[RMDB]
RNA sequence: GGGAACGACUCGAGUAGAGUCGAAAAGGAACAUCCUUCGGGAUGUUCCAUAGGCCGCGCCUCUCGCUAAGCGGCGCGCAGAGGCGCGCAGCGCAGCUUGAAAGUAAGCCUAGUUCGCUAGGCUUAACGUUCAGUUUAUCUUCGGAUAAACUGAACGAAAAGAAACAACAACAACAAC
Reactivity to 2A3 in 0.01 (KOAc 150mM, MgCl2 10mM, bicine 150mM(pH8.5), 24C), signal-to-noise 2, nucleotides 027 to 126: g000g000a020a000c050a000u010c010c000u040u090c180g050g000g000a000u010g000u000u000c010c000a000u010a010g030g000c060c010g010c010g010c000c010u010c000u000c010g030c060u060a160a070g150c040g210g010c050g000c010g000c090a000g000a010g080g000c000g020c000g000c020a030g010c100g000c010a040g030c040u070u200g090a080a060a050g080u090a000a010g000c000c000u000a010g000u010u060c170g010c050u000a010g000g000c000u010u000a000a000
Reactivity to DMS in 0.01 (KOAc 150mM, MgCl2 10mM, bicine 150mM(pH8.5), 24C), signal-to-noise 4, nucleotides 027 to 126: g010g020a010a000c000a000u000c000c000u000u010c200g020g030g010a010u000g000u000u000c000c000a030u000a040g010g000c060c030g010c030g010c010c000u010c010u010c080g000c070u010a080a180g010c120g010g000c270g020c070g020c150a050g000a030g010g020c030g010c000g020c040a020g020c040g010c070a060g000c080u000u000g000a080a070a110g000u000a000a020g010c000c000u000a010g000u010u020c220g010c000u000a000g010g000c000u000u000a010a100